[RMDB]
RNA sequence: GGGAACGACUCGAGUAGAGUCGAAAACUUGCCCCACUCGGAAUUCAAGUGUAGCAGCGAGAACAGCGAGGGCUGCCUGGGCGAUGGCUACUGUCCGCCAUCCUGCACCUGCACCGGCACCGUGGUCCCCGUACAUGAGGUUCGCCUCAUGUACGGGAAAAGAAACAACAACAACAAC
Reactivity to 2A3 in 0.01 (KOAc 150mM, MgCl2 10mM, bicine 150mM(pH8.5), 24C), signal-to-noise 1, nucleotides 027 to 126: c000u030u170g060c050c000c000c000a050c050u030c040g070g060a030a070u150u070c030a150a000g030u030g040u090a030g060c050a000g000c020g060a040g040a130a050c020a000g090c010g090a100g050g050g000c000u030g020c020c020u050g020g000g040c050g010a040u020g000g050c020u120a090c080u260g070u120c090c000g000c010c000a010u020c000c010u000g000c030a020c020c000u030g000c020a040c000c020g040g050c050a020c020c060g030u020g060g030u010c000
Reactivity to DMS in 0.01 (KOAc 150mM, MgCl2 10mM, bicine 150mM(pH8.5), 24C), signal-to-noise 2, nucleotides 027 to 126: c150u010u000g020c010c000c020c070a130c080u000c080g010g010a100a110u040u000c090a060a140g000u000g010u000a100g000c050a010g020c070g000a150g020a040a010c110a060g020c070g030a070g010g010g010c010u000g040c050c020u000g000g000g000c070g010a060u000g010g000c020u000a090c190u000g020u000c100c110g020c020c010a040u010c010c070u030g020c040a080c030c050u010g030c170a080c050c000g030g020c100a070c050c000g020u010g000g010u010c050